Source: RMDB library RNAMAK, as collected in RNAgym. Structure probing data (2A3 and DMS) for a 207-nucleotide construct. The 2A3 profile rests on 1,945 reads. High DMS reactivity at an A or C suggests that its Watson-Crick edge is free. The reactions ran in a buffer of 150 mM KOAc, 10 mM MgCl2 and 150 mM bicine (pH 8.5), at 24 C. Values cover nucleotides 27 to 156.
[RMDB]
RNA sequence: GGGAACGACUCGAGUAGAGUCGAAAACGACGAUUUCUUCGGAAAUCGUCGAAAAAAACCUUUGUGUCCAGGGAGAUCGAUUUCUGCCCAUUGGGCAGAAUCAGAUCGAGGAUCUGGACACUCUGGUAAAAAAGUCAGGUUCUUCGGAACCUGACAACAUAUUGGCAAUCUUCGGAUUGCCAAUAUGAAAAGAAACAACAACAACAAC
Reactivity to 2A3 in 0.01 (KOAc 150mM, MgCl2 10mM, bicine 150mM(pH8.5), 24C), signal-to-noise 2, nucleotides 027 to 156: c020g000a000c070g000a000u020u010u020c030u090u140c290g100g020a010a000a010u010c000g010u010c010g000a030a000a000a000a000a000a010c010c000u000u020u000g000u000g000u000c000c000a010g000g030g000a000g000a000u010c010g000a010u060u210u050c020u000g030c050c040c120a290u130u300g000g000g010c000a000g000a000a010u020c110a050g000a000u000c000g000a100g010g010a000u010c000u000g000g000a000c000a000c000u020c000u000g000g030u080a150a140a000a010a000a020g000u000c000a000g020g000u000u000c000u070u140c270g070g010a000a000c000c010u000g000a000c000a000a000
Reactivity to DMS in 0.01 (KOAc 150mM, MgCl2 10mM, bicine 150mM(pH8.5), 24C), signal-to-noise 1, nucleotides 027 to 156: c010g010a050c000g000a010u030u000u030c010u010u010c270g010g000a000a000a010u010c010g010u000c000g000a000a000a070a080a060a060a040c020c010u010u000u000g010u000g020u000c010c000a000g000g000g020a060g020a030u000c000g010a180u000u000u010c030u000g090c030c030c000a300u000u000g050g020g000c000a000g000a000a010u010c110a240g020a000u000c000g010a110g030g000a030u000c010u000g010g010a040c000a010c010u000c030u000g000g030u000a000a030a040a120a090a120g010u010c010a000g000g040u000u000c000u000u000c300g050g000a000a020c010c010u000g010a000c000a010a060